[RMDB]
RNA sequence: GGGAACGACUCGAGUAGAGUCGAAAACUGCCGCCGGGACGCAGUGAUCCUCGCAGGGUCGCACGGUCGCCUCGGGUCGGCCUCGUGUCGGCUCGACCUACGAGGGGAGCGAGUGGCGAGCCCGACCAAAACUUUCUCGCCUUCGGGCGAGAAAGAACCAUAGCACGAGGUUCGCCUCGUGCUAUGGAAAAGAAACAACAACAACAAC
Reactivity to 2A3 in 0.01 (KOAc 150mM, MgCl2 10mM, bicine 150mM(pH8.5), 24C), signal-to-noise 1, nucleotides 027 to 156: c010u020g000c010c010g070c030c060g110g040g020a010c030g010c000a010g030u000g030a040u040c010c040u010c050g050c070a090g000g020g000u020c010g040c030a080c050g090g110u070c050g090c050c030u000c000g000g000g000u020c000g000g010c010c000u050c060g300u270g120u090c050g000g050c100u120c090g000a030c010c010u050a040c020g020a020g070g010g000g020a050g100c010g010a140g050u080g000g030c030g000a040g050c020c040c010g020a070c040c020a040a060a020a010c040u020u000u020c000u010c010g000c030c000u010u060c180g040g010g020c000g000a000g000a000a000a000g000a000a000